[RMDB]
RNA sequence: GGGAACGACUCGAGUAGAGUCGAAAAUAAACAAUGACGAAGCUUAAAUGCUAGUGAAGACAGUGUUCGCACUGAAUAAUCUUUGCAAAACCAUCGAAUUGCGGGGACGCCCUUAGAGCUUCACGUACGGCCAAUCGUUCGAAAGGAUUGAUUUGGCGUAUUGGACGUGGUUCGCCACGUCCAAUACAAAAGAAACAACAACAACAAC
Reactivity to 2A3 in 0.01 (KOAc 150mM, MgCl2 10mM, bicine 150mM(pH8.5), 24C), signal-to-noise 2, nucleotides 027 to 156: u150a050a050a030c050a000a070u110g150a020c100g040a000a000g000c000u070u120a110a090a020u160g050c040u040a010g030u020g070a010a010g000a000c000a000g000u000g080u100u080c190g030c030a000c000u000g030a000a000u190a090a040u030c000u040u040u040g040c010a040a150a060a040c070c000a050u130c040g100a150a160u220u110g050c090g000g000g000g000a000c020g100c010c010c000u000u010a080g000a000g030c000u050u020c010a010c080g180u180a050c050g120g000c000c000a000a000u010c010g010u020u000c000g000a010a040a050g050g010a000u150u300g000a030u040u260u120g000g000c000